[RMDB]
Structure probing data (2A3 and DMS) for a 177-nucleotide construct. For DMS the reverse transcriptase was MarathonRT.
RNA sequence: GGGAACGACUCGAGUAGAGUCGAAAAAAGACUGGGCAGACGGUUAAAGUAGCUUAUUUUAAGCAAACAGAUGAGACCCUGGAUAGAGAUAUUCGUAUGAUUGAUUAUUUAAGAGAAGAAAGUGAGGACAUUCCGAUCGUUUCGACGAUCGGAAUGUAAAAGAAACAACAACAACAAC
Reactivity to 2A3 in 0.01 (KOAc 150mM, MgCl2 10mM, bicine 150mM(pH8.5), 24C), signal-to-noise 1, nucleotides 027 to 126: a000a000g040a000c020u090g000g000g000c000a000g080a120c010g070g030u030u020a000a000a000g090u110a000g000c080u110u050a180u260u280u060u050a000a000g010c050a130a130a130c130a000g040a060u110g000a000g130a130c000c000c000u000g110g000a000u000a130g130a000g170a250u120a020u020u020c120g020u230a130u160g000a090u250u000g000a060u000u100a110u000u300u000a210a090g040a000g000a090a000g020a020a010a000g170u110g000a000g300g000
Reactivity to DMS in 0.01 (KOAc 150mM, MgCl2 10mM, bicine 150mM(pH8.5), 24C), signal-to-noise 1, nucleotides 027 to 126: a180a000g000a080c030u000g020g000g000c020a030g000a090c170g000g030u000u000a060a080a080g000u000a130g010c010u080u000a120u000u050u030u000a010a010g000c030a210a060a190c050a070g000a110u020g030a160g050a060c130c000c030u000g000g030a060u030a100g000a080g000a040u000a050u000u050c030g030u060a030u050g010a240u040u060g000a120u050u000a100u000u010u010a010a090g000a080g070a020a050g000a020a130a110g020u000g000a060g040g030